[RMDB]
RNA sequence: GGGAACGACUCGAGUAGAGUCGAAAACAGAAAGCUCUCUUGGACCGCUCGGUGGUUCUGAAUAUCACCAGCCCCAAGGGUCGCAAGUCCAAGCACGACCCGGCCAAGCUGCAGUGGGAGGACGUACAACAAGUUCAGCUUUCGAGCUGAACUUGUUAAAAGAAACAACAACAACAAC
Reactivity to DMS in 0.01 (KOAc 150mM, MgCl2 10mM, bicine 150mM(pH8.5), 24C), signal-to-noise 1, nucleotides 027 to 126: c150a180g010a170a150a100g000c020u020c020u000c000u000u010g000g020a020c070c300g000c060u000c120g050g010u000g000g000u000u000c260u020g020a100a090u030a010u000c010a020c020c010a080g020c010c070c000c020a020a060g030g000g000u000c130g020c050a100a100g010u000c010c060a000a300g020c060a060c000g000a120c090c100c000g000g010c040c100a120a140g000c060u000g000c070a140g000u000g000g000g010a300g000g000a040c120g040u050a030c040